Conditions: 150 mM KOAc, 10 mM MgCl2 and 150 mM bicine (pH 8.5), 24 C. An RNA of 177 nucleotides, treated with DMS and read out base by base.

RNA sequence: GGGAACGACUCGAGUAGAGUCGAAAAGAUAUGGAUGUGGCUAAUCUGUAUUGUCAGGACUCGUCCUGGAUCGGAAACGAUCCUGGACGAGUCCUUGGAUUUAUACAGACAACCACAUCCUAAGUCACAGUGGAAAUAAGUUCGCUUAUUUCCACUGAAAAGAAACAACAACAACAAC
Reactivity to DMS in 0.01 (KOAc 150mM, MgCl2 10mM, bicine 150mM(pH8.5), 24C), signal-to-noise 2, nucleotides 027 to 126: g000a040u000a300u000g000g020a000u000g030u000g010g000c010u000a250a300u010c000u000g000u010a000u000u000g000u010c000a030g000g000a020c000u000c000g000u000c000c040u000g000g000a000u000c010g020g020a150a110a300c000g010a020u000c000c010u000g000g010a030c000g000a010g010u000c000c000u000u000g000g000a050u000u020u010a010u010a000c010a000g020a020c140a200a210c010c020a010c000a000u000c010c000u010a030a070g000u000c040a260

It was measured as part of the RMDB library TTRINS.
Values cover nucleotides 27 to 126.